[RMDB]
RNA sequence: GGGAACGACUCGAGUAGAGUCGAAAAGCCAGUCAGAGGGCGCUACCAUGCAAACUAGGGCUGGCUACUCUUGCACAGAAUCACCUUUGUAUAAUAACCAGUGCAAGAAGGGUUAUUAUACCAUUUAAAAAUCGUGAAUGCUUCGGCAUUCACGAAACUCCAACACUUCCUUCGGGAAGUGUUGGAGAAAAGAAACAACAACAACAAC
Reactivity to 2A3 in 0.01 (KOAc 150mM, MgCl2 10mM, bicine 150mM(pH8.5), 24C), signal-to-noise 1, nucleotides 027 to 156: g000c000c000a000g010u000c000a000g000a010g110g000g000c000g000c000u160a280c080c140a090u210g010c010a020a000a000c000u000a030g000g000g020c000u000g000g000c000u000a000c000u000c000u000u000g000c020a000c010a020g090a040a070u040c030a260c120c040u130u220u300g000u010a000u000a000a020u010a000a000c000c000a000g000u000g000c000a010a000g000a000a000g000g000g000u000u000a000u000u000a000u000a000c000c030a070u190u190u300a130a130a030a030a030u040c000g000u000g000a000a000u010g000c000u000u030c060g070g000c010a000u000u000c000a000c000g000a000a000a000
Chemical mapping of a 207-nucleotide RNA with 2A3. Values cover nucleotides 27 to 156. The data come from the RNA Mapping Database (RMDB), library M2RFOK. For 2A3, 815 sequencing reads were counted. For 2A3 the reverse transcriptase was SuperScript II with manganese.